[RMDB]
RNA sequence: GGGAACGACUCGAGUAGAGUCGAAAAUGCAGCGGGCCACCCUCACCCUGGCAGCCCGUCGGACGACCUUGAUCGUGGCUCACGGGCUAGCCAUCGCCGAACACGCCGACCGCAUUGUCGUGCUCGAACCAUCAAUUACCUUCGGGUAAUUGAUGGUAAAAGAAACAACAACAACAAC
Reactivity to DMS in 0.01 (KOAc 150mM, MgCl2 10mM, bicine 150mM(pH8.5), 24C), signal-to-noise 4, nucleotides 027 to 126: u040g000c080a120g010c040g000g000g000c030c040a070c000c000c030u000c030a170c040c050c050u010g000g000c060a050g020c020c010c000g020u000c270g010g020a040c030g020a020c020c180u030u010g010a190u020c050g000u020g010g040c040u000c080a030c010g000g000g000c000u000a100g000c010c000a010u030c090g000c030c030g020a070a060c080a060c080g020c000c010g000a070c040c030g000c050a160u010u020g010u010c020g000u010g010c050u010c050g010a220
Reactivity to 2A3 in 0.01 (KOAc 150mM, MgCl2 10mM, bicine 150mM(pH8.5), 24C), signal-to-noise 8, nucleotides 027 to 126: u170g020c020a010g030c020g020g000g000c030c010a050c010c000c010u030c020a070c010c010c010u010g000g000c010a010g010c000c000c000g020u040c080g030g020a020c010g030a050c010c110u170u230g090a250u170c010g010u030g090g050c030u040c070a010c010g010g000g000c010u010a030g000c000c000a020u040c030g030c020c010g030a050a030c050a000c050g010c000c010g030a060c000c040g050c040a040u020u100g040u040c020g030u050g030c010u030c050g040a040